The record gives the reactivity of an RNA of 177 nucleotides to DMS and 2A3. The RNA was probed in 150 mM KOAc, 10 mM MgCl2 and 150 mM bicine (pH 8.5) at 24 C. The 2A3 profile rests on 2,673 reads.

[RMDB]
RNA sequence: GGGAACGACUCGAGUAGAGUCGAAAAGAUAUGGACUGUUGGGAGAAAUCCUGAUCGGAAACGAUCAAGAUUUCUUUGAUCAAUGUCCUAAGUCAAAUCUACCUGUCGCUUCGGCGACAGGUAGAAAGGGGAUUAUUAUGUUCGCAUAAUAAUCCCCAAAAGAAACAACAACAACAAC
Reactivity to DMS in 0.01 (KOAc 150mM, MgCl2 10mM, bicine 150mM(pH8.5), 24C), signal-to-noise 2, nucleotides 027 to 126: g000a030u010a300u000g010g010a010c010u010g020u000u000g000g000g000a000g010a000a000a000u000c000c030u020g020a010u000c000g000g010a070a140a150c000g000a000u000c000a010a010g000a010u000u000u000c010u000u000u020g010a140u020c020a040a080u000g000u000c000c000u000a080a090g000u000c030a090a130a190u000c000u010a010c000c000u010g000u000c000g000c000u000u010c270g050g020c000g010a000c010a000g010g000u000a000g000a000a020a120
Reactivity to 2A3 in 0.01 (KOAc 150mM, MgCl2 10mM, bicine 150mM(pH8.5), 24C), signal-to-noise 1, nucleotides 027 to 126: g020a030u060a040u090g000g000a000c020u090g070u170u040g050g030g000a000g020a020a000a000u030c000c000u010g010a000u000c000g010g090a040a030a100c000g010a000u020c020a000a010g000a010u000u010u000c030u030u020u040g120a110u120c010a030a030u060g000u020c000c000u030a120a040g030u020c050a020a070a200u070c000u000a000c000c000u000g020u000c000g030c040u110u040c300g160g000c020g000a000c000a000g010g000u000a000g010a000a010a000